[RMDB]
RNA sequence: GGGAACGACUCGAGUAGAGUCGAAAACGGCGGCCCGGGCACCGGCCCGGGCUCCUACACCAUCUACGUGCAGAUGCCGGACACGUUGGCGAUCAACGGCAACAGUCGGGUCAUGGUGGCCGACGUCCGGUAUGAUCUCGUUCGCGAGAUCAUACCGAAAAGAAACAACAACAACAAC
Reactivity to DMS in 0.01 (KOAc 150mM, MgCl2 10mM, bicine 150mM(pH8.5), 24C), signal-to-noise 1, nucleotides 027 to 126: c080g000g020c080g000g000c000c000c000g080g050g030c150a070c290c210g000g110c000c040c030g010g040g010c070u010c050c000u000a180c140a150c010c050a060u000c050u050a090c150g020u060g010c080a120g000a020u000g040c000c000g000g000a100c140a100c060g000u000u000g020g000c030g000a060u030c010a070a150c020g060g000c000a220a080c030a210g000u010c000g000g000g000u060c150a070u010g000g010u010g000g000c000c020g030a010c010g000u000c020
Reactivity to 2A3 in 0.01 (KOAc 150mM, MgCl2 10mM, bicine 150mM(pH8.5), 24C), signal-to-noise 4, nucleotides 027 to 126: c050g020g000c090g020g000c000c030c080g000g000g000c190a220c280c120g300g030c000c000c000g030g000g000c000u010c000c010u010a010c010a010c020c000a020u040c050u120a080c080g100u120g040c060a030g020a150u080g060c010c000g040g020a030c050a000c100g010u020u060g030g020c030g070a050u060c040a100a120c050g000g000c020a090a080c010a280g110u060c080g040g040g000u120c110a070u060g020g000u020g100g020c000c000g000a020c040g030u030c010